[RMDB]
This 207-nucleotide RNA was probed chemically with DMS and 2A3. For 2A3, 765 sequencing reads were counted. As a SHAPE reagent, 2A3 marks flexible, mostly unpaired nucleotides at the ribose 2'-OH.

RNA sequence: GGGAACGACUCGAGUAGAGUCGAAAACUGUUAAUCUCGACACGGAAUUCUUCUGGGAGCUCGAAGCUGAUGAUUCUCAUCAGCUCGUUCGCAUCGUCCAUUUUGUGCCACCGAUGACCCCGAAACUCGUACCAAACAUUCGCCUUUGAGUCGGCACAUUUAGAAUUCCCUUCGGGGAAUUCUAAAUAAAAGAAACAACAACAACAAC
Reactivity to DMS in 0.01 (KOAc 150mM, MgCl2 10mM, bicine 150mM(pH8.5), 24C), signal-to-noise 1, nucleotides 027 to 156: c030u000g000u010u010a060a120u000c040u010c020g010a110c040a110c060g030g000a060a110u000u010c030u000u010c040u000g000g000g010a210g000c020u000c030g000a060a120g040c000u020g030a000u010g010a270u000u000c210u000c000a040u000c010a000g090c000u000c020g000u000u010c030g030c090a160u010c050g020u000c010c040a060u000u010u000u000g000u010g000c020c030a090c060c010g000a060u010g010a090c050c040c000c030g010a080a060a030c040u010c030g040u000a210c050c020a100a070a060c080a200u000u010c050g000c020c020u010u030u000g000a130g000u000c010g020g030c030a020c110
Reactivity to 2A3 in 0.01 (KOAc 150mM, MgCl2 10mM, bicine 150mM(pH8.5), 24C), signal-to-noise 2, nucleotides 027 to 156: c040u040g020u080u070a090a110u050c020u010c090g020a010c020a020c060g030g100a100a100u140u030c010u110u000c030u130g050g000g010a000g020c030u020c050g040a080a020g000c000u000g000a020u010g000a090u300u070c170u080c160a010u010c000a010g000c010u000c000g000u020u060c080g000c040a100u030c020g100u000c060c000a080u110u130u080u050g050u050g020c000c010a030c000c020g090a060u040g110a240c040c020c030c010g020a040a040a030c080u110c040g090u110a130c070c060a080a060a070c030a080u130u160c040g000c010c010u050u080u110g020a050g000u030c070g010g010c010a000c000